[RMDB]
RNA sequence: GGGAACGACUCGAGUAGAGUCGAAAAAGAGAUCGUGGAUCAAUGGCUCAUCCUCCAGGACACGGCCGGUCCCCUCUCGCACAUCGUCUUCAUGGGCAUGGGGGAACCGCUCCUCAACCUCGCGAACACAUGUAAGGCUGUUCGCAGCCUUACAUGUAAAAGAAACAACAACAACAAC
Reactivity to DMS in 0.01 (KOAc 150mM, MgCl2 10mM, bicine 150mM(pH8.5), 24C), signal-to-noise 5, nucleotides 027 to 126: a070g000a110g010a070u010c030g020u000g010g010a110u010c050a110a110u000g020g000c070u010c050a080u000c020c030u000c050c070a080g000g030a100c120a050c140g030g010c300c030g010g000u010c030c010c000c010u000c040u000c090g010c030a030c030a010u000c150g010u000c160u010u010c110a050u000g000g000g000c010a120u000g000g020g000g000g000a010a030c030c020g010c080u000c020c020u010c080a070a130c030c020u000c060g000c060g010a070a080c150
Reactivity to 2A3 in 0.01 (KOAc 150mM, MgCl2 10mM, bicine 150mM(pH8.5), 24C), signal-to-noise 4, nucleotides 027 to 126: a000g100a020g020a060u080c070g070u120g060g020a070u090c080a060a160u170g040g010c030u020c050a070u040c030c020u010c020c020a040g030g010a020c020a010c110g020g000c030c010g010g020u020c000c000c000c000u000c010u010c080g030c000a020c000a040u080c070g300u030c100u300u190c090a030u050g010g030g000c010a020u040g000g000g010g000g000a010a040c010c010g010c010u030c010c020u030c010a040a090c000c010u030c030g040c030g050a090a010c040